[RMDB]
The record gives the reactivity of an RNA of 177 nucleotides to 2A3 and DMS. For 2A3 the reverse transcriptase was SuperScript II with manganese. High 2A3 reactivity points to a flexible backbone, as in loops and unpaired stretches. For DMS the reverse transcriptase was MarathonRT. The 2A3 profile rests on 8,917 reads. The reactions ran in a buffer of 150 mM KOAc, 10 mM MgCl2 and 150 mM bicine (pH 8.5), at 24 C. Source: RMDB library OK1LIB, as collected in RNAgym.
RNA sequence: GGGAACGACUCGAGUAGAGUCGAAAAUCAAUCCUGGCCGACCCGAUGAGCGAUCGGUCGGCAAGAUCUCGGUUCUGGAGCUCGGACAGGGCGAUAUUCUCAGGAUCACCAGUUCCACAGGCGGGGCACCCAGCUAAUCAUUCGUGAUUAGCUGGGUAAAAGAAACAACAACAACAAC
Reactivity to 2A3 in 0.01 (KOAc 150mM, MgCl2 10mM, bicine 150mM(pH8.5), 24C), signal-to-noise 1, nucleotides 027 to 126: u110c040a000a030u040c000c000u020g070g020c000c000g030a050c130c060c080g030a060u080g080a050g230c130g070a030u050c030g000g010u000c000g010g000c010a000a010g030a020u030c030u020c030g120g080u140u010c020u040g030g030a050g010c020u010c040g020g030a050c060a100g050g000g000c030g020a030u030a060u200u050c090u030c020a030g080g020a050u030c010a020c060c010a030g030u070u020c010c010a040c020a030g080g000c030g010g010g010g020c020
Reactivity to DMS in 0.01 (KOAc 150mM, MgCl2 10mM, bicine 150mM(pH8.5), 24C), signal-to-noise 4, nucleotides 027 to 126: u070c180a160a120u000c020c010u010g010g020c010c000g000a000c070c050c050g020a020u010g010a120g010c190g010a180u000c050g030g000u010c030g000g020c050a060a030g000a020u010c030u000c040g000g020u030u010c060u020g020g000a110g020c050u000c030g010g000a100c050a070g000g020g000c050g000a040u010a060u010u010c060u040c040a140g030g010a030u020c040a080c080c060a130g010u010u010c020c010a070c070a070g010g000c020g000g000g010g020c080